RNA sequence: GGGAACGACUCGAGUAGAGUCGAAAAGCACGCCUGUAGUCACAGCUAUUCAAGAGGUGGAGGUGGAAGGAUCACUUGAGCCCAGGCGUUAGAGGUUACAUUGAGCAGGGAUCUCACCACUACACUCGACGUCACCAAAUUUCGAUUUGGUGACGUCAAAAGAAACAACAACAACAAC
Reactivity to DMS in 0.01 (KOAc 150mM, MgCl2 10mM, bicine 150mM(pH8.5), 24C), signal-to-noise 1, nucleotides 027 to 126: g000c120a080c050g010c000c010u020g020u000a040g000u020c060a040c190a070g000c090u000a090u010u010c120a050a160g000a060g000g040u000g000g020a030g030g060u000g000g030a080a200g010g000a070u000c060a040c060u000u000g000a090g020c060c020c020a110g000g010c070g030u000u000a050g030a070g000g000u000u000a120c080a100u000u000g000a090g010c030a050g000g000g000a020u000c010u000c070a120c000c010a060c040u000a090c070a060c060u000c140
Reactivity to 2A3 in 0.01 (KOAc 150mM, MgCl2 10mM, bicine 150mM(pH8.5), 24C), signal-to-noise 2, nucleotides 027 to 126: g010c020a010c060g020c000c070u060g070u100a040g110u080c010a010c010a120g020c000u060a050u140u080c140a110a020g020a020g180g000u110g020g080a110g050g030u090g020g030a050a030g060g020a000u050c010a000c100u070u040g030a010g030c000c000c020a020g030g000c070g070u000u070a060g010a020g020g100u070u100a040c050a070u080u090g040a010g000c020a030g000g060g000a020u050c000u060c020a050c000c020a020c020u080a020c040a020c030u010c020